[RMDB]
RNA sequence: GGGAACGACUCGAGUAGAGUCGAAAAGAAAGAAAGAAAGCGGUUGGGUGGGUCCAUCGACCGUCGUGGCGUAUUCGGACGCUUUACCACGACGCGAGGAAAUAGCGAGACCGAGCACCCCCUUUAACAGAGGUAUAGUAGUUCGCUACUAUACCAAGACAUGUUAUACCUUCGGGUAUAACAUGUCAAAAGAAACAACAACAACAAC
Reactivity to DMS in 0.01 (KOAc 150mM, MgCl2 10mM, bicine 150mM(pH8.5), 24C), signal-to-noise 1, nucleotides 027 to 156: g010a110a070a090g030a140a080a230g000a050a110a160g030c050g040g010u000u000g000g020g010u010g000g020g000u020c030c000a130u000c060g000a070c180c000g000u010c020g040u010g000g050c040g000u000a070u000u000c010g030g000a140c010g070c090u010u000u000a030c020c020a020c000g030a040c020g000c020g000a090g020g010a070a020a110u000a090g010c060g000a160g000a120c020c020g020a070g020c020a110c000c000c020c020c010u000u000u000a100a150c190a140g010a170g020g000u000a030u000a050g000u000a020g020u000u020c300g000c010u000a040c020u000a020u020a000c000c000a030a030
Reactivity to 2A3 in 0.01 (KOAc 150mM, MgCl2 10mM, bicine 150mM(pH8.5), 24C), signal-to-noise 2, nucleotides 027 to 156: g050a020a030a000g050a040a060a020g050a040a050a030g080c140g080g070u210u050g120g090g010u060g040g000g020u020c060c020a060u140c050g030a040c040c010g000u020c000g000u000g000g020c060g010u060a110u080u170c070g060g030a020c040g020c020u080u150u110a040c020c010a000c030g010a000c000g000c010g010a000g040g040a130a010a100u040a020g080c070g000a030g010a050c020c030g010a010g020c000a050c000c020c040c000c010u030u080u020a070a050c060a010g090a040g070g000u000a010u000a010g000u000a000g020u050u060c160g010c120u000a000c000u000a000u000a010c010c000a000a000
Conditions: 150 mM KOAc, 10 mM MgCl2 and 150 mM bicine (pH 8.5), 24 C.
This 207-nucleotide RNA was probed chemically with DMS and 2A3.
DMS adducts were read by reverse transcription with MarathonRT.